[RMDB]
RNA sequence: GGGAACGACUCGAGUAGAGUCGAAAAGAUUGCUGUUGUGUACGUAAGCCGGAGAUGCAACACGAAAUGAGGAGGGUGUAGUCAGUGCAGUUGUGCUUGCUAGUUGAUGGCAGUGGGAAAUGCAACACCCACCUCAUCAUUUCGAUGAUGAGGUGGGAAAAGAAACAACAACAACAAC
Reactivity to 2A3 in 0.01 (KOAc 150mM, MgCl2 10mM, bicine 150mM(pH8.5), 24C), signal-to-noise 1, nucleotides 027 to 126: g070a080u090u110g010c030u010g030u090u030g060u020g030u020a020c050g050u060a000a070g000c020c180g000g010a120g010a010u010g020c020a020a050c020a030c070g100a000a090a090u160g000a040g040g000a040g000g000g050u040g030u040a060g070u040c090a030g060u050g050c010a040g060u060u090g030u060g000c010u070u160g000c000u020a030g070u110u080g110a110u100g040g000c000a000g000u040g040g040g030a010a050a000u200g000c000a010a000c020a020
Reactivity to DMS in 0.01 (KOAc 150mM, MgCl2 10mM, bicine 150mM(pH8.5), 24C), signal-to-noise 2, nucleotides 027 to 126: g000a180u000u000g010c040u000g000u000u010g020u020g000u000a090c100g040u000a100a160g030c020c000g010g000a100g000a070u020g020c080a030a010c140a090c100g020a030a040a070u000g010a090g020g000a050g020g000g010u000g000u020a060g000u020c120a040g050u000g010c040a060g010u000u000g020u010g020c030u000u000g020c040u000a020g040u010u020g010a140u010g000g020c030a020g020u000g010g000g000a110a070a100u030g000c090a060a090c150a060